[RMDB]
RNA sequence: GGGAACGACUCGAGUAGAGUCGAAAAGCUCACACCUGUAAUCCCUGUGCUUUGACAGGCCAAGGUAAGAGGAUCUCUUGAAACUAGGUGUUCAGAGCCAGCCUGGACAACACAGGUUGUAUUUACCCAACUUUAAAUCCUUCGGGAUUUAAAGUUGAAAAGAAACAACAACAACAAC
Reactivity to 2A3 in 0.01 (KOAc 150mM, MgCl2 10mM, bicine 150mM(pH8.5), 24C), signal-to-noise 2, nucleotides 027 to 126: g020c000u070c010a070c000a000c010c040u080g010u080a030a060u080c010c010c010u040g050u070g000c100u110u060u070g030a020c020a020g120g000c030c020a100a040g060g000u060a050a020g040a040g120g090a110u050c050u020c000u110u110g110a120a080a050c040u050a100g000g040u110g260u150u060c040a030g020a000g110c000c000a000g000c000c010u040g010g040a100c030a080a000c010a080c000a050g040g000u000u050g010u010a060u020u080u060a070c030c000
Reactivity to DMS in 0.01 (KOAc 150mM, MgCl2 10mM, bicine 150mM(pH8.5), 24C), signal-to-noise 6, nucleotides 027 to 126: g020c060u000c050a060c070a040c060c030u010g020u010a110a100u000c040c010c000u000g000u010g030c070u010u010u010g010a270c170a040g020g020c010c020a080a050g010g010u000a100a120g000a050g010g000a090u010c060u000c060u010u010g010a100a080a090c120u010a030g000g020u000g000u000u000c060a040g010a100g010c010c020a050g000c050c030u000g000g010a140c130a060a060c090a050c030a010g000g000u010u000g000u000a050u000u000u000a120c100c100